[RMDB]
RNA sequence: GGGAACGACUCGAGUAGAGUCGAAAACUAUAUGAGACCCCUGCUAGAUGUAUCAGCAAGAUUUGCUUGUCAUACUUUGGGGACUAUGCAGAACAGACAGUGACCAUCUUAAGGGACAUGCCCCCUACUGGCUUGCUGGUGCUGAGAAACCUAGAUCAAUAUAUCGUGUCUUCGGACACGAUAUAUUAAAAGAAACAACAACAACAAC
Reactivity to 2A3 in 0.01 (KOAc 150mM, MgCl2 10mM, bicine 150mM(pH8.5), 24C), signal-to-noise 2, nucleotides 027 to 156: c070u100a070u100a150u300g090a050g010a070c010c020c000c010u070g010c000u010a000g000a040u030g000u020a020u020c010a000g030c010a040a090g070a300u150u190u160g040c010u020u000g030u040c010a040u050a260c090u100u170u100g030g000g040g020a020c050u050a010u110g000c060a030g060a210a050c020a060g160a040c010a050g030u070g090a150c030c050a040u100c050u100u130a060a080g010g000g050a030c020a070u090g000c030c010c000c050c000u020a080c020u010g000g000c010u000u010g010c000u000g030g060u000g000c010u000g000a020g010a020a020a000c010c000u010a040g000a080u130c030
Reactivity to DMS in 0.01 (KOAc 150mM, MgCl2 10mM, bicine 150mM(pH8.5), 24C), signal-to-noise 1, nucleotides 027 to 156: c060u000a120u000a160u010g000a220g010a150c120c010c000c050u010g020c010u000a060g010a050u000g010u010a090u000c030a030g010c040a060a130g000a210u010u000u010g020c030u000u010g030u000c130a120u000a070c050u000u000u010g010g030g050g030a150c050u000a080u010g030c000a090g030a150a130c110a210g020a050c030a120g020u010g020a090c070c050a120u000c050u000u020a080a120g020g010g020a140c040a070u000g030c040c020c000c000c010u000a090c230u000g010g000c010u010u010g020c010u000g000g000u000g010c010u000g000a160g040a210a110a060c060c000u010a050g000a150u000c070